[RMDB]
RNA sequence: GGGAACGACUCGAGUAGAGUCGAAAAUGCCUUUGCCGGAGACACGGGUCAGCAAAUUUUCACGCGUCAGCGCAUCCAGCGCCUUACGGACCGUGACCCUGCUCACCUGCCAGCGCACGCUCAGUUCUAUCCGCUGCUAUUUCGAUAGCAGCGGAUAAAAAGAAACAACAACAACAAC
Reactivity to DMS in 0.01 (KOAc 150mM, MgCl2 10mM, bicine 150mM(pH8.5), 24C), signal-to-noise 1, nucleotides 027 to 126: u050g000c000c040u060u000u000g000c000c040g060g000a020g010a110c120a100c070g040g000g000u030c050a050g010c110a090a000a000u040u020u000u000c070a040c130g000c050g010u060c090a060g000c000g000c020a180u000c130c180a090g020c070g010c000c140u000u000a010c080g000g020a050c070c000g050u000g000a040c190c130c030u000g000c060u010c020a030c000c040u020g000c020c000a040g000c070g020c090a050c000g050c000u000c040a040g000u000u030c010
Reactivity to 2A3 in 0.01 (KOAc 150mM, MgCl2 10mM, bicine 150mM(pH8.5), 24C), signal-to-noise 2, nucleotides 027 to 126: u100g070c000c010u020u020u090g060c030c000g080g000a030g020a040c080a020c140g000g000g060u070c040a020g000c050a050a090a140u240u200u050u080c040a040c050g030c000g030u040c020a000g020c020g000c030a050u030c060c060a050g010c020g010c020c000u020u100a020c040g080g060a070c000c030g000u010g010a010c000c000c000u010g040c030u000c020a040c020c010u010g000c000c010a040g000c000g000c020a000c030g030c000u030c020a030g010u090u050c020
Background
An RNA of 177 nucleotides, treated with DMS and 2A3 and read out base by base. For 2A3 the reverse transcriptase was SuperScript II with manganese. Values cover nucleotides 27 to 126. The 2A3 profile rests on 2,317 reads.